[RMDB]
RNA sequence: GGGAACGACUCGAGUAGAGUCGAAAAGAAAGAAAGAAGAAACGAGGCUACUAAAGCGCAAAAAGAAAAACGAAAGCGCAUUCGUAUCAGUUAAGGAGUCGCGAAAAGAAAGAAAGAAAGAAGAAAAGAGUAUCCAUACUUUCGAGUAUGGAUACUCAAAAGAAACAACAACAACAAC
Reactivity to 2A3 in 0.01 (KOAc 150mM, MgCl2 10mM, bicine 150mM(pH8.5), 24C), signal-to-noise 1, nucleotides 027 to 126: g040a000a070a020g110a000a050a010g060a020a060g030a000a040a000c010g000a060g060g000c030u040a030c010u070a080a100a090g000c010g000c030a000a300a000a000a000g200a030a070a000a070a010c090g010a040a000a060g000c060g000c010a020u030u020c000g030u110a070u120c130a040g050u020u070a000a070g040g000a040g000u040c060g000c050g110a050a060a000a000g100a000a010a000g000a030a030a010g050a000a000a000g040a040a020g060a000a130a000a000
Reactivity to DMS in 0.01 (KOAc 150mM, MgCl2 10mM, bicine 150mM(pH8.5), 24C), signal-to-noise 2, nucleotides 027 to 126: g000a120a070a130g010a080a140a060g010a040a090g020a100a060a110c080g000a030g010g010c020u030a020c020u050a040a010a070g020c020g000c040a020a040a050a110a140g010a010a130a060a090a090c090g010a040a030a190g020c010g000c060a070u000u000c040g010u000a090u010c020a110g000u000u000a050a120g020g030a010g010u020c030g010c070g000a050a070a010a030g020a050a050a120g000a040a020a080g030a090a000a080g030a060a020g010a060a030a040a060
Chemical mapping of a 177-nucleotide RNA with 2A3 and DMS. The DMS profile rests on 1,645 reads. DMS adducts were read by reverse transcription with MarathonRT. It was measured as part of the RMDB library OK1LIB.